An RNA of 207 nucleotides, treated with 2A3 and DMS and read out base by base. The RNA was probed in 150 mM KOAc, 10 mM MgCl2 and 150 mM bicine (pH 8.5) at 24 C. Source: RMDB library OK3TST, as collected in RNAgym. The DMS profile rests on 2,902 reads. DMS adducts were read by reverse transcription with MarathonRT.
RNA sequence: GGGAACGACUCGAGUAGAGUCGAAAAGUGUGGUGGCAUACACCUGUGGUCUCAGCUACUCAGGAGGCUGAGGUAGGAGGAUUGCUUAUGCCUGGGAAAUUGAGGCUGCAGUGAACUGUGGUCACACCACUGCACUGCAGCCUGGUGACAGAACAAGCGAAAGAGUCCAAUUCGUUGGACUCUUUCGAAAAGAAACAACAACAACAAC
Reactivity to 2A3 in 0.01 (KOAc 150mM, MgCl2 10mM, bicine 150mM(pH8.5), 24C), signal-to-noise 1, nucleotides 027 to 156: g120u120g040u090g080g060u030g010g040c050a040u020a070c020a040c000c000u010g140u040g030g080u050c000u000c020a000g020c010u050a080c030u050c110a040g110g000a080g170g000c040u030g010a000g000g020u070a060g000g070a070g030g020a100u100u040g040c050u070u010a000u130g060c000c010u000g000g000g100a050a060a110u060u190g020a050g000g000c000u000g000c010a010g020u010g000a130a090c090u030g010u010g000g040u160c020a040c000a000c110c000a010c000u020g000c020a000c000u010g000c020a000g000c000c000u000g000g000u010g030a020c000a000g100a140a050c020a020a090g120
Reactivity to DMS in 0.01 (KOAc 150mM, MgCl2 10mM, bicine 150mM(pH8.5), 24C), signal-to-noise 2, nucleotides 027 to 156: g000u000g060u010g020g020u080g000g050c080a180u010a100c030a090c010c000u020g060u000g030g010u010c010u010c000a050g010c020u000a100c090u010c100a060g050g060a170g000g000c050u010g000a020g020g000u000a090g010g000a140g010g000a160u010u010g030c040u000u000a070u000g000c030c040u000g000g010g000a030a080a150u010u030g000a050g050g060c030u000g030c010a040g000u000g020a030a140c110u000g030u020g030g000u000c160a180c190a300c030c000a000c020u000g000c020a050c020u000g000c000a010g010c010c000u000g020g020u000g000a140c040a080g000a050a130c090a120a170g010